The record gives the reactivity of an RNA of 207 nucleotides to 2A3 and DMS. Source: RMDB library OK3TST, as collected in RNAgym. 2A3 adducts were read by reverse transcription with SuperScript II with manganese. The reactions ran in a buffer of 150 mM KOAc, 10 mM MgCl2 and 150 mM bicine (pH 8.5), at 24 C. DMS adducts were read by reverse transcription with MarathonRT.
[RMDB]
RNA sequence: GGGAACGACUCGAGUAGAGUCGAAAAUCUUGAGGAGUGCAACAGCACACGCAAUAGGUGUGUGCACCAUACCUGGCAUUUUUUUUUUGUAGGGAUGGGGUCUCGCUGUGUUGCUCGGGCUGGUUUCAAACUCCUGCACUCAAACAGUCCUCCUGCAGAUUAAUUACCGAUUCGUCGGUAAUUAAUCAAAAGAAACAACAACAACAAC
Reactivity to 2A3 in 0.01 (KOAc 150mM, MgCl2 10mM, bicine 150mM(pH8.5), 24C), signal-to-noise 3, nucleotides 027 to 156: u040c020u030u090g050a060g050g030a020g010u020g000c040a080a030c020a040g000c020a020c000a010c070g030c030a060a210u060a190g090g020u010g000u000g030u070g030c010a020c000c020a010u110a200c000c010u040g100g020c030a040u060u050u030u020u030u010u020u070u120u070g020u020a050g010g000g010a010u000g010g000g000g040u040c030u010c030g000c010u050g030u030g000u130u050g010c030u050c060g010g020g000c020u040g000g060u050u130u170c080a100a070a060c050u050c020c050u030g000c000a020c010u010c010a030a080a070c020a010g020u030c000c030u000c000c020u060g020c040a010
Reactivity to DMS in 0.01 (KOAc 150mM, MgCl2 10mM, bicine 150mM(pH8.5), 24C), signal-to-noise 1, nucleotides 027 to 156: u000c020u000u000g020a090g020g010a090g010u000g000c030a030a080c040a150g000c000a050c010a050c030g000c030a090a090u010a300g010g000u010g020u000g010u000g010c010a050c010c020a020u010a040c010c020u020g050g060c020a000u010u000u010u000u000u010u020u000u010u020g030u010a100g020g010g010a040u000g010g000g010g030u000c040u000c040g020c050u000g010u010g000u030u000g000c000u000c080g030g020g000c010u010g000g000u000u000u000c070a080a080a050c020u000c020c010u010g010c050a070c060u030c000a090a090a070c020a080g000u000c010c010u000c020c000u000g020c120a240